[RMDB]
RNA sequence: GGGAACGACUCGAGUAGAGUCGAAAAUACAAGUUCAUGUCCACGAUUCACACUCAGAAGCUGCCAGAAUAGAGAGCUUAGGAAUGGAGCUUGCACUACAAGUCCUUUGCAUACAAGAGUUAAGACGGCCAUCAACUAGAUUCGUCUAGUUGAUGGCAAAAGAAACAACAACAACAAC
Reactivity to 2A3 in 0.01 (KOAc 150mM, MgCl2 10mM, bicine 150mM(pH8.5), 24C), signal-to-noise 2, nucleotides 027 to 126: u110a020c020a000a000g020u000u080c040a030u080g030u000c010c010a010c020g030a020u040u070c030a010c010a040c060u060c030a050g000a220a020g030c030u070g020c040c010a030g040a140a010u140a050g130a030g020a010g000c000u080u060a030g000g080a080a030u070g030g040a030g000c000u000u070g000c100a050c060u150a060c010a150a010g020u000c010c000u030u060u090g060c020a040u070a210c060a120a050g060a000g070u020u020a100a020g040a050c030g110
Reactivity to DMS in 0.01 (KOAc 150mM, MgCl2 10mM, bicine 150mM(pH8.5), 24C), signal-to-noise 2, nucleotides 027 to 126: u000a190c140a040a060g010u000u000c050a060u000g010u010c020c040a080c060g010a070u000u010c060a090c050a080c090u020c060a140g030a070a070g020c060u000g000c050c030a090g010a140a050u010a070g000a110g000a100g030c050u000u000a040g020g020a000a080u010g030g000a050g010c020u000u010g010c060a070c040u010a050c060a020a070g000u000c030c020u000u030u000g000c030a100u020a120c060a040a080g000a070g000u010u010a060a090g000a070c170g020

This 177-nucleotide RNA was probed chemically with 2A3 and DMS.
Conditions: 150 mM KOAc, 10 mM MgCl2 and 150 mM bicine (pH 8.5), 24 C.
The DMS profile rests on 1,476 reads.
It was measured as part of the RMDB library OK2TRN.